[RMDB]
RNA sequence: GGGAACGACUCGAGUAGAGUCGAAAAAUGGUUGAGUAGCACUCAGAGGGAGGAAUCCACACGGAGGUAAGCAGACAAAUCACCUCCAGAGGACCCCUUCAGCGAACAGAGAGCGCUGCGCGCGAGGGACUAGUCAAAAGUUCGCUUUUGACUAGUCAAAAGAAACAACAACAACAAC
Reactivity to DMS in 0.01 (KOAc 150mM, MgCl2 10mM, bicine 150mM(pH8.5), 24C), signal-to-noise 2, nucleotides 027 to 126: a070u000g010g000u030u000g000a050g020u000a040g000c040a090c020u000c010a130g000a120g030g000g010a060g000g010a060a080u000c000c010a070c130a300c240g010g000a000g030g000u000a060a100g030c140a100g010a120c160a050a050a140u000c120a030c000c000u010c010c000a030g000a290g010g010a070c080c010c000c010u000u000c010a080g010c050g000a070a030c120a120g010a120g010a070g010c050g000c020u000g040c090g000c060g020c030g020a120g010g010
Reactivity to 2A3 in 0.01 (KOAc 150mM, MgCl2 10mM, bicine 150mM(pH8.5), 24C), signal-to-noise 1, nucleotides 027 to 126: a000u210g020g020u180u110g050a020g030u060a000g020c020a000c110u000c030a000g010a040g060g030g010a170g030g060a140a130u030c020c010a030c000a010c100g000g040a010g060g010u030a040a050g090c090a050g120a290c090a050a130a030u130c020a010c010c020u010c000c000a000g000a010g020g020a010c030c030c000c000u040u020c020a010g030c010g030a040a020c020a040g120a010g000a010g110c030g010c000u030g000c030g030c010g010c000g020a110g070g090